This 177-nucleotide RNA was probed chemically with 2A3. 2A3 adducts were read by reverse transcription with SuperScript II with manganese. The reactions ran in a buffer of 150 mM KOAc, 10 mM MgCl2 and 150 mM bicine (pH 8.5), at 24 C. The 2A3 profile rests on 1,271 reads.
RNA sequence: GGGAACGACUCGAGUAGAGUCGAAAAUAAAAUACGGUGUAAGAACAGCCCAACUUACACCGUGCGGCACAGCGGAAACGCUGAUGUCGUAAAAUGGGCUAAUCGUAAAUAAUCGAAAUAAAAAAAACACAUCAGAUUAGUUCGCUAAUCUGAUGUGAAAAGAAACAACAACAACAAC
Reactivity to 2A3 in 0.01 (KOAc 150mM, MgCl2 10mM, bicine 150mM(pH8.5), 24C), signal-to-noise 1, nucleotides 027 to 126: u120a000a080a000a000u190a020c010g000g000u010g000u010a010a010g020a140a010c030a050g040c030c000c000a010a020c010u000u000a000c000a010c000c000g000u020g000c020g020g000c010a000c010a030g000c000g030g000a060a060a000c010g040c010u010g010a080u000g000u000c010g000u010a000a000a010a030u070g030g000g030c000u010a030a140u050c010g010u050a090a100a150u150a080a120u180c010g020a050a080a060u200a080a040a010a000a000a000a000a050